[RMDB]
RNA sequence: GGGAACGACUCGAGUAGAGUCGAAAAGAUAUGGAUAUUACAUACACCGACCUUGAAAUACUUAGUCGGAAACGACUAAGGAGGUGUGUACGGUAUCCUAAGUCAAAGAAUCGGUUCGCCGAUUCAACAUUACGUAACUGUUCGCAGUUACGUAAUGAAAAGAAACAACAACAACAAC
Reactivity to DMS in 0.01 (KOAc 150mM, MgCl2 10mM, bicine 150mM(pH8.5), 24C), signal-to-noise 9, nucleotides 027 to 126: g000a050u010a300u000g000g010a010u000a020u000u000a300c060a080u000a010c000a010c020c160g010a120c160c110u000u010g020a100a100a140u010a280c010u000u000a000g010u000c000g010g000a080a100a200c000g010a010c000u000a010a010g000g010a050g020g020u010g010u000g020u000a040c090g000g010u000a010u000c000c000u000a060a160g010u010c040a090a130a150g000a010a010u000c010g010g010u000u010c300g030c000c000g000a000u000u000c010a120a220
Reactivity to 2A3 in 0.01 (KOAc 150mM, MgCl2 10mM, bicine 150mM(pH8.5), 24C), signal-to-noise 9, nucleotides 027 to 126: g040a030u080a060u170g000g000a000u010a020u040u110a100c090a070u050a020c010a000c010c090g260a170c040c080u080u230g200a230a180a030u200a100c010u020u010a010g000u010c010g010g000a050a090a040c010g000a000c000u010a010a010g030g000a030g000g000u020g000u010g010u030a030c110g000g010u000a000u000c000c000u010a160a050g070u040c080a170a020a150g010a000a010u000c010g000g100u070u100c300g040c090c000g000a010u000u010c000a000a010

Structure probing data (DMS and 2A3) for a 177-nucleotide construct. DMS adducts were read by reverse transcription with MarathonRT.